Structure probing data (DMS and 2A3) for a 207-nucleotide construct. For 2A3, 12,617 sequencing reads were counted. For 2A3 the reverse transcriptase was SuperScript II with manganese. Conditions: 150 mM KOAc, 10 mM MgCl2 and 150 mM bicine (pH 8.5), 24 C. DMS adducts were read by reverse transcription with MarathonRT. Source: RMDB library OK3TST, as collected in RNAgym. Values are in units of 0.01, from 0 to 300, in steps of 10.

RNA sequence: GGGAACGACUCGAGUAGAGUCGAAAACCAAUGGGAAACCAUUGGCAACUCGGAAACGAGUUGAACCGGGAAUUAGCGACAAAACCGGCGACAAUGCGAUUUUAAGCAUUGUCGAUUACGCCCAUGUCGAUUUUAAGACAUGGAGCGAAUGUCGCAAGGAUCUAUGUGCGUUCGCGCACGUGGAUCCAAAAGAAACAACAACAACAAC
Reactivity to DMS in 0.01 (KOAc 150mM, MgCl2 10mM, bicine 150mM(pH8.5), 24C), signal-to-noise 3, nucleotides 027 to 156: c010c000a000a000u000g010g000g000a220a140a230c000c010a020u010u000g000g030c000a030a030c010u010c000g000g000a190a150a200c020g010a060g020u000u010g020a080a110c020c010g010g000g010a160a090u000u000a110g000c020g000a040c000a120a050a140a190c020c000g010g000c000g000a030c000a010a000u000g020c020g010a250u000u000u000u020a120a300g000c000a010u000u000g000u000c010g000a060u000u010a080c010g040c000c000c000a050u000g010u000c000g000a250u010u010u000u010a100a260g010a010c000a030u020g010g000a000g030c000g010a040a060u010g010u000c000g050c010a170a300
Reactivity to 2A3 in 0.01 (KOAc 150mM, MgCl2 10mM, bicine 150mM(pH8.5), 24C), signal-to-noise 8, nucleotides 027 to 156: c000c000a000a000u000g000g000g020a030a030a040c000c000a000u000u000g000g000c000a000a010c000u000c000g020g030a080a070a060c010g000a000g000u000u000g010a060a040c000c010g000g020g020a080a160u150u090a070g000c000g000a000c000a000a020a020a070c000c000g000g000c000g000a000c000a000a000u000g000c020g130a170u010u060u100u300a130a000g000c000a000u000u000g000u000c000g000a000u000u010a070c010g000c000c000c000a000u000g010u000c000g010a030u100u100u080u290a120a010g000a000c000a000u000g000g010a030g000c000g010a010a020u060g000u000c000g010c000a000a020